[RMDB]
RNA sequence: GGGAACGACUCGAGUAGAGUCGAAAACUUAUUGUCCUAUAUUAGUGUAAUGAUAAAUUGCACGGACGGUGUAUGGGAUGCGACUCAAGGCGUUGACUUAAUCAACGAGCUAUGCCAGGGGUGCAUAUGGAGUAGUAAUAUUCGUAUUACUACUCCAAAAAGAAACAACAACAACAAC
Reactivity to 2A3 in 0.01 (KOAc 150mM, MgCl2 10mM, bicine 150mM(pH8.5), 24C), signal-to-noise 4, nucleotides 027 to 126: c020u100u090a090u210u250g050u020c000c020u060a050u000a040u230u200a080g010u010g010u020a020a010u000g060a030u130a230a150a010u010u000g010c000a000c000g010g040a030c060g060g140u120g010u070a090u100g040g000g040a020u070g040c040g130a020c000u000c070a040a040g010g010c020g000u020u030g060a220c020u030u110a060a160u160c040a030a070c120g010a010g010c000u030a010u060g010c020c000a040g000g020g000g050u030g020c040a030u120a300
Reactivity to DMS in 0.01 (KOAc 150mM, MgCl2 10mM, bicine 150mM(pH8.5), 24C), signal-to-noise 9, nucleotides 027 to 126: c070u010u010a090u010u010g010u000c000c010u000a070u000a070u000u010a130g020u000g010u000a010a010u000g000a180u010a060a110a030u000u000g010c000a010c010g010g010a090c170g010g010u010g010u000a030u000g000g000g000a040u000g010c050g000a040c020u000c030a050a060g010g000c010g020u000u000g000a080c070u000u000a100a180u010c200a050a070c180g000a060g010c040u000a040u000g010c020c010a120g000g000g000g010u000g010c040a050u000a100
An RNA of 177 nucleotides, treated with 2A3 and DMS and read out base by base. It was measured as part of the RMDB library OK2TRN. Values cover nucleotides 27 to 126. Reactivities are rounded to 0.1 and cut off at 0 and 3.